[RMDB]
RNA sequence: GGGAACGACUCGAGUAGAGUCGAAAACACAUAGAAAGCCUGUAAUUUCGCUGUGCACAUUUGAACUAGAUAUCUGACAUUCAGGAAUGGAAUUAAGUGGGUGAUCGGUUUGCCAUGUGGUUGACCAAAAUUUAGAGAGCUUCGGCUCUCUAAAUUUAAAAGAAACAACAACAACAAC
Reactivity to DMS in 0.01 (KOAc 150mM, MgCl2 10mM, bicine 150mM(pH8.5), 24C), signal-to-noise 2, nucleotides 027 to 126: c030a100c070a100u010a120g010a080a130a120g000c020c040u010g040u010a090a110u010u010u000c050g010c080u000g010u000g030c140a110c070a070u010u010u000g010a080a070c110u000a070g010a060u010a060u000c040u000g020a110c080a140u000u000c070a030g010g020a110a100u000g000g000a090a020u000u020a030a110g000u010g000g000g000u010g000a060u010c130g010g020u000u000u000g030c050c040a070u010g020u000g020g000u000u000g040a150c040c030a070
Source information
Structure probing data (DMS) for a 177-nucleotide construct. For DMS, 969 sequencing reads were counted. DMS adducts were read by reverse transcription with MarathonRT. The RNA was probed in 150 mM KOAc, 10 mM MgCl2 and 150 mM bicine (pH 8.5) at 24 C.